[RMDB]
Record summary
The record gives the reactivity of an RNA of 177 nucleotides to 2A3 and DMS. The RNA was probed in 150 mM KOAc, 10 mM MgCl2 and 150 mM bicine (pH 8.5) at 24 C. High DMS reactivity at an A or C suggests that its Watson-Crick edge is free. 2A3 adducts were read by reverse transcription with SuperScript II with manganese.

RNA sequence: GGGAACGACUCGAGUAGAGUCGAAAACUACGCGCAAACGCGACAAUGGAUAAGGUCUAUCGAUAUCCAACAGAAACAUUGCUACUUGGAGAGGUAUAAAUCAAGAUAGGCAGGCUAUCAUAGAAAGAAGUAGUUUAUUAUUCGUAGUAAGCUGCUUAAAAGAAACAACAACAACAAC
Reactivity to 2A3 in 0.01 (KOAc 150mM, MgCl2 10mM, bicine 150mM(pH8.5), 24C), signal-to-noise 9, nucleotides 027 to 126: c020u100a060c030g020c000g020c090a150a150a070c080g010c010g070a050c080a050a140u150g060g010a030u030a070a050g070g020u030c020u040a040u040c040g030a030u020a020u090c010c010a020a030c030a060g130a050a100a000c050a070u080u210g030c030u060a070c030u020u030g020g020a050g010a030g040g120u170a120u070a140a090a070u140c070a090a010g010a040u010a010g020g010c020a010g090g020c010u020a010u040c020a060u050a080g150a040a110a010g080
Reactivity to DMS in 0.01 (KOAc 150mM, MgCl2 10mM, bicine 150mM(pH8.5), 24C), signal-to-noise 9, nucleotides 027 to 126: c030u000a090c080g020c030g010c210a070a080a150c100g010c020g010a120c150a090a080u020g000g000a040u010a040a080g000g010u000c040u010a020u020c030g000a090u030a070u000c010c010a050a080c160a070g010a120a080a110c160a140u020u020g010c060u020a050c140u000u010g000g000a050g000a080g020g000u010a080u020a040a080a070u020c110a060a100g000a020u000a010g000g010c030a060g010g010c040u000a020u000c020a050u030a080g000a070a090a060g010